The record gives the reactivity of an RNA of 177 nucleotides to DMS and 2A3. For 2A3 the reverse transcriptase was SuperScript II with manganese.
RNA sequence: GGGAACGACUCGAGUAGAGUCGAAAAAGUGAGGACAUAUGUGUGGGAGAAGAUUCUAGAAGCUCUUGAGAGAAUCCAGAUGAAAGUCAGCGAGGAGCUGUACUGCUGGAGCUGCAGAGAAAAUGGAGAAGCUUCUCUCAUUCGUGAGAGAAGCUUCAAAAGAAACAACAACAACAAC
Reactivity to DMS in 0.01 (KOAc 150mM, MgCl2 10mM, bicine 150mM(pH8.5), 24C), signal-to-noise 2, nucleotides 027 to 126: a060g010u000g000a080g000g000a090c060a040u040a050u010g010u000g050u010g000g000g040a060g000a070a040g000a090u040u010c030u000a090g000a120a040g000c010u000c010u000u010g010a060g000a010g010a140a090u000c030c000a000g000a100u000g020a080a060a010g000u010c000a000g000c000g000a110g030g010a300g010c020u000g010u020a010c020u000g050c040u000g010g020a020g020c050u000g080c040a040g030a020g010a100a010a100a160u000g010g020a300
Reactivity to 2A3 in 0.01 (KOAc 150mM, MgCl2 10mM, bicine 150mM(pH8.5), 24C), signal-to-noise 2, nucleotides 027 to 126: a000g090u060g020a010g000g000a000c000a080u130a160u120g050u030g010u000g050g040g000a080g060a020a020g010a080u100u050c030u030a010g040a070a030g070c050u020c000u030u130g120a100g000a000g010a100a100u020c000c000a000g000a030u180g220a030a020a000g020u010c000a020g000c040g020a040g030g100a060g000c000u040g050u140a040c020u020g030c010u000g010g000a000g050c030u050g010c040a000g000a000g020a030a020a020a010u090g040g000a090